Description:
An RNA of 177 nucleotides, treated with DMS and 2A3 and read out base by base. High DMS reactivity at an A or C suggests that its Watson-Crick edge is free. The reactions ran in a buffer of 150 mM KOAc, 10 mM MgCl2 and 150 mM bicine (pH 8.5), at 24 C. 2A3 adducts were read by reverse transcription with SuperScript II with manganese.

RNA sequence: GGGAACGACUCGAGUAGAGUCGAAAAACUACAUGUACUUGGAUAGGAGCGAUGCCGGGAAGGCCAUUUCGUUUGCUACCACAUUGGGAGUGAACAAGUGCCACGUACAGAUCAUGGACCUCGGGCAACCUCUACAGUAAUUCGUUACUGUAGAGGUAAAAGAAACAACAACAACAAC
Reactivity to DMS in 0.01 (KOAc 150mM, MgCl2 10mM, bicine 150mM(pH8.5), 24C), signal-to-noise 9, nucleotides 027 to 126: a100c050u010a080c130a070u020g010u010a030c050u010u010g010g010a080u020a070g000g010a080g010c070g010a060u010g000c040c010g000g020g020a110a100g000g010c040c040a030u000u000u010c150g010u000u000u000g000c000u000a050c020c010a180c280a180u030u030g010g000g000a020g000u000g010a000a000c010a020a020g020u010g000c010c010a080c100g010u020a050c060a040g000a090u010c100a060u020g010g000a070c040c010u000c040g000g010g010c100a100
Reactivity to 2A3 in 0.01 (KOAc 150mM, MgCl2 10mM, bicine 150mM(pH8.5), 24C), signal-to-noise 9, nucleotides 027 to 126: a010c060u130a030c030a110u110g020u050a040c020u030u050g040g020a040u070a160g050g030a050g040c050g040a030u070g020c030c010g030g030g070a080a070g040g000c030c010a010u030u040u050c060g000u000u000u010g010c000u060a180c000c010a140c040a260u140u300g060g000g000a010g000u030g010a010a000c000a030a020g010u010g050c010c010a040c030g020u040a020c020a030g050a090u100c030a040u100g070g020a060c010c020u030c050g010g010g000c020a020